Chemical mapping of a 177-nucleotide RNA with DMS and 2A3.
The data come from the RNA Mapping Database (RMDB), libraries RFM100 and RFMREP.
RNA sequence: GGGAACGACUCGAGUAGAGUCGAAAAGAAGGGACGGAUGGUAUCUUCGGAUGCCAUAGAUAGAUGGCUACCGCUCUUGGUGCGAGGGAUACGUCCCGCUUGCAGCACGGGAGAGACAGAACCUGGCAUACGUCUCCCUUUUCGAAGGGAGACGUAUAAAAGAAACAACAACAACAAC
Reactivity to DMS in 0.01 (KOAc 150mM, MgCl2 10mM, bicine 150mM(pH8.5), 24C), signal-to-noise 3, nucleotides 027 to 126: g000a080a050g000g020g000a090c060g000g010a060u020g000g000u000a020u000c000u000u050c140g000g010a040u000g010c000c010a010u010a010g010a090u010a120g010a060u020g000g010c040u000a200c040c030g010c010u000c020u000u010g000g120u020g010c000g000a030g010g010g000a030u010a070c210g020u000c020c010c000g000c260u040u070g000c150a050g000c030a060c040g000g000g000a040g000a090g000a040c100a100g000a090a090c070c000u000g010g030c200
Reactivity to 2A3 in 0.01 (KOAc 150mM, MgCl2 10mM, bicine 150mM(pH8.5), 24C), signal-to-noise 2, nucleotides 027 to 126: g080a000a040g000g020g030a020c030g030g050a010u020g000g000u030a040u020c000u040u070c120g050g000a010u050g000c000c000a000u020a060g030a000u040a020g110a050u070g010g010c020u090a060c000c040g030c010u000c020u000u060g180g000u030g020c040g000a080g000g010g000a030u040a100c110g050u020c000c000c010g010c030u000u060g000c040a010g000c010a000c000g000g000g010a000g000a010g040a010c050a070g080a010a030c020c000u000g020g010c080